[RMDB]
RNA sequence: GGGAACGACUCGAGUAGAGUCGAAAAGGAAAUUUCACAUAAUUAUGUUGUAGAGACCUUUAGCGUGUUAUCUCAAAAGGCUGAAAAAUGUGAGAACCUCAGACAACUUGGUGAGCCAAUGGAAGCCAAUCAUUUAAACAGGCGUCUUUAGAUAAGACCGCUAAUAAUAGUUCGCUAUUAUUAGCGGAAAAGAAACAACAACAACAAC
Reactivity to 2A3 in 0.01 (KOAc 150mM, MgCl2 10mM, bicine 150mM(pH8.5), 24C), signal-to-noise 1, nucleotides 027 to 156: g070g000a050a060a090u070u130u050c070a030c030a040u130a060a040u300u250a100u180g050u070u060g000u050a030g010a050g010a160c110c000u090u160u130a090g060c030g000u080g030u070u080a040u050c000u000c010a000a080a040a040g060g020c000u040g100a070a020a020a110a090u030g040u000g000a040g010a110a110c000c020u000c020a030g000a080c070a060a090c080u060u060g020g000u070g070a000g000c100c000a020a010u010g060g040a040a000g000c000c000a040a000u030c010a040u080u120u280a020a050a060c020a010g070g010c000g070u040c020u040u080u150a060g010a120u020a060a040g030a030
Reactivity to DMS in 0.01 (KOAc 150mM, MgCl2 10mM, bicine 150mM(pH8.5), 24C), signal-to-noise 1, nucleotides 027 to 156: g040g020a050a060a110u010u000u000c000a060c020a110u020a120a170u010u020a110u010g050u000u000g000u000a200g020a300g020a050c040c010u010u000u030a120g030c040g030u000g040u000u000a130u020c000u010c040a090a120a070a060g010g060c010u020g000a020a070a070a100a020u010g010u000g000a080g000a070a150c030c000u000c050a210g000a120c070a040a090c060u000u020g030g040u000g000a100g050c010c030a070a080u010g000g010a060a060g020c040c000a070a090u010c080a100u000u000u000a090a040a110c120a060g070g000c050g010u000c010u000u000u000a090g010a140u020a020a060g000a230
The data come from the RNA Mapping Database (RMDB), library OK3TST. This 207-nucleotide RNA was probed chemically with 2A3 and DMS. For DMS the reverse transcriptase was MarathonRT. The DMS profile rests on 1,829 reads.